[RMDB]
An RNA of 177 nucleotides, treated with DMS and 2A3 and read out base by base. For DMS the reverse transcriptase was MarathonRT. The data come from the RNA Mapping Database (RMDB), libraries RFM100 and RFMREP. The 2A3 profile rests on 2,949 reads. 2A3 adducts were read by reverse transcription with SuperScript II with manganese.
RNA sequence: GGGAACGACUCGAGUAGAGUCGAAAAUGGGACGGCUCUGUAAAAAAGGAGAGGGAGUUCAUGAACAGCAACUCCCACUUCCAGUGGAUCGAAGGCACGCCGCGAGGCGCCCCGACGAUUCGCCGAGGCUAUUGGAUGCUUUCGAGCAUCCAAUAGCAAAAGAAACAACAACAACAAC
Reactivity to DMS in 0.01 (KOAc 150mM, MgCl2 10mM, bicine 150mM(pH8.5), 24C), signal-to-noise 3, nucleotides 027 to 126: u020g000g020g000a130c080g030g000c010u000c010u000g020u030a030a020a120a040a040a110g000g000a020g010a070g000g010g000a020g000u000u000c020a160u000g040a150a100c270a130g050c160a020a010c000u000c000c010c000a030c000u020u000c000c050a170g000u010g000g000a010u000c000g010a070a280g000g010c210a160c030g000c000c010g000c260g010a110g000g060c000g050c140c300c000c010g000a300c020g000a080u020u000c000g000c020c070g000a090g010
Reactivity to 2A3 in 0.01 (KOAc 150mM, MgCl2 10mM, bicine 150mM(pH8.5), 24C), signal-to-noise 3, nucleotides 027 to 126: u100g020g010g040a010c020g030g000c000u000c010u080g090u080a040a030a020a010a030a060g020g010a000g010a050g000g010g000a010g000u010u040c090a080u250g120a140a110c110a070g060c020a010a020c000u000c000c010c000a030c020u040u000c010c000a020g000u020g010g010a020u010c020g010a030a020g000g000c020a000c010g000c000c000g020c030g020a100g010g000c000g010c040c010c010c010g030a040c000g000a000u000u010c000g000c010c030g030a030g100